[RMDB]
RNA sequence: GGGAACGACUCGAGUAGAGUCGAAAAGGGGUCGUCAAAAAUGUUGUCAGAGCCCCAUGGCUGAAGCCUCCACGGCCAUGGAGCGCUCUUGGAUUUACGCCAAUGACGACGGAGGCACCCAAACUUUGCGUGUAUUGUUCGCAAUACACGCAAAGAAGUCCAGUCUUAUGUUCGCAUAAGACUGGACAAAAGAAACAACAACAACAAC
Reactivity to 2A3 in 0.01 (KOAc 150mM, MgCl2 10mM, bicine 150mM(pH8.5), 24C), signal-to-noise 2, nucleotides 027 to 156: g080g010g010g010u020c030g000u010c010a000a050a070a050a060u200g040u170u120g150u210c130a080g000a000g010c000c000c000c000a000u000g010g000c000u010g050a100a010g010c010c010u000c000c030a040c010g000g000c000c000a000u010g030g020a090g050c210g010c040u000c000u030u070g070g020a030u080u060u280a040c060g010c040c040a070a120u070g000a000c000g000a000c000g010g000a000g000g000c010a050c000c000c010a000a090a100c000u030u000u000g000c000g010u000g010u010a000u010u000g050u040u050c150g000c130a000a000u000a000c000a040c000g000c000a000a000a000g000a000a000
Reactivity to DMS in 0.01 (KOAc 150mM, MgCl2 10mM, bicine 150mM(pH8.5), 24C), signal-to-noise 1, nucleotides 027 to 156: g000g010g020g050u000c040g040u010c040a020a050a080a090a200u000g020u010u000g010u010c040a140g020a120g020c000c010c010c020a050u000g000g040c010u030g010a020a090g000c010c000u000c010c000a300c000g000g030c000c010a050u010g050g020a010g000c040g000c100u000c070u000u000g040g020a160u010u000u000a150c080g010c000c010a070a200u010g010a080c050g020a070c010g040g000a030g070g010c030a030c000c000c040a090a080a240c000u000u020u000g000c000g080u000g010u010a000u030u000g000u010u000c300g010c010a010a010u000a000c030a000c040g040c010a010a000a010g000a080a100